[RMDB]
RNA sequence: GGGAACGACUCGAGUAGAGUCGAAAAGCAGUAACUUUUAAUAGGCAUACCACUUUUGCAUCAAGCUAUAAAUAAUCGCAUACUUUGAUAUUUAAUCUGGCCUAUCAAAGUAAACAUCUAUGGUUUCACUUUCUUAACUGUUCGCAGUUAAGAAAGUAAAAGAAACAACAACAACAAC
Reactivity to DMS in 0.01 (KOAc 150mM, MgCl2 10mM, bicine 150mM(pH8.5), 24C), signal-to-noise 3, nucleotides 027 to 126: g020c080a100g010u010a070a100c030u000u010u010u010a020a170u000a050g010g020c060a080u010a080c080c050a090c040u000u000u010u000g010c050a070u000c130a040a060g000c040u000a060u000a040a090a090u010a090a040u020c090g000c100a140u000a030c010u000u000u000g000a000u010a020u010u010u030a080a100u000c090u010g010g000c080c080u000a000u000c030a020a000a010g010u000a040a070a090c110a050u000c090u000a070u000g020g010u000u000u000c060
Reactivity to 2A3 in 0.01 (KOAc 150mM, MgCl2 10mM, bicine 150mM(pH8.5), 24C), signal-to-noise 4, nucleotides 027 to 126: g060c040a020g040u100a070a080c020u080u080u050u150a170a100u160a110g030g010c020a050u060a100c020c030a040c060u040u060u100u080g000c000a070u040c040a090a030g040c010u050a050u080a200a150a070u140a060a050u110c040g000c060a030u030a070c010u020u030u020g010a000u010a040u040u170u050a120a110u080c060u090g080g000c000c000u010a010u000c000a000a010a020g010u040a010a110a010c010a030u060c060u160a100u130g110g040u000u000u020c020